[RMDB]
RNA sequence: GGGAACGACUCGAGUAGAGUCGAAAAGAAAACUCAUCCCAAACAAAAAACAGGGUUUCUGAUAACCGGUGCGACAAUAUGCCCUUCCAAGGCACUGACCGGCACGGAGAAAAACUAUAAUGCCAUGAAACACUAAUGUUUUCGAACAUUAGUGUUUAAAAGAAACAACAACAACAAC
Reactivity to DMS in 0.01 (KOAc 150mM, MgCl2 10mM, bicine 150mM(pH8.5), 24C), signal-to-noise 9, nucleotides 027 to 126: g010a090a070a110a110c120u010c080a120u000c000c000c010a140a160a110c170a020a060a090a070a070a110c160a060g000g000g010u000u000u000c020u010g010a130u030a110a130c030c000g010g010u010g010c190g000a040c150a030a040u010a080u000g010c010c000c020u000u040c240c290a120a110g000g020c010a030c040u010g000a050c040c000g010g000c070a060c090g010g000a050g000a060a020a050a060a050c100u010a050u020a070a070u020g010c050c050a100u020g010
Reactivity to 2A3 in 0.01 (KOAc 150mM, MgCl2 10mM, bicine 150mM(pH8.5), 24C), signal-to-noise 7, nucleotides 027 to 126: g020a010a090a030a030c040u040c040a070u050c030c000c030a040a090a020c070a040a090a010a020a010a000c060a050g060g020g020u020u070u030c030u030g090a150u050a170a080c010c010g020g000u040g010c040g010a020c040a040a020u030a020u090g000c000c010c000u170u120c090c010a040a030g010g000c000a010c040u010g010a030c010c000g000g010c040a010c040g070g010a040g080a030a080a020a010a000c040u060a040u080a270a130u150g030c050c040a070u130g090